[RMDB]
RNA sequence: GGGAACGACUCGAGUAGAGUCGAAAAUGUGAUGUCAGCUCAUUUUGAAUAGGGAUGUUACAUGUCACGAGACUGUUGUAAUCAUCUUGGUUCUCAUGUCUCAAGGUAAUUAGCAGGUACUAGUCAGCUGCUAUACUAUCUUCGGAUAGUAUAGCAGAAAAGAAACAACAACAACAAC
Reactivity to 2A3 in 0.01 (KOAc 150mM, MgCl2 10mM, bicine 150mM(pH8.5), 24C), signal-to-noise 6, nucleotides 027 to 126: u060g000u020g040a020u070g040u090c020a050g040c040u010c060a080u040u060u120u200g140a110a070u080a110g000g020g090a020u000g000u030u040a030c020a040u050g050u060c030a000c120g050a070g020a020c030u040g120u200u040g090u180a010a020u070c010a010u020c030u080u080g030g000u020u000c030u010c020a050u170g020u000c010u000c030a030a020g040g010u050a060a100u080u040a030g020c020a010g040g050u030a040c020u030a040g090u050c030a020g000
Reactivity to DMS in 0.01 (KOAc 150mM, MgCl2 10mM, bicine 150mM(pH8.5), 24C), signal-to-noise 7, nucleotides 027 to 126: u010g010u010g010a040u000g010u000c060a080g020c060u010c060a060u000u000u000u000g010a070a110u010a100g000g000g010a060u000g010u000u000a020c060a050u010g000u000c070a100c230g010a100g020a060c030u000g010u000u000g020u000a020a030u000c020a040u010c110u000u010g020g000u000u000c010u000c090a060u000g000u000c020u000c020a090a110g010g010u000a030a050u010u000a040g010c040a030g010g010u000a070c060u000a060g000u010c080a120g010
An RNA of 177 nucleotides, treated with 2A3 and DMS and read out base by base. For 2A3, 7,593 sequencing reads were counted. DMS adducts were read by reverse transcription with MarathonRT. Values cover nucleotides 27 to 126. The RNA was probed in 150 mM KOAc, 10 mM MgCl2 and 150 mM bicine (pH 8.5) at 24 C.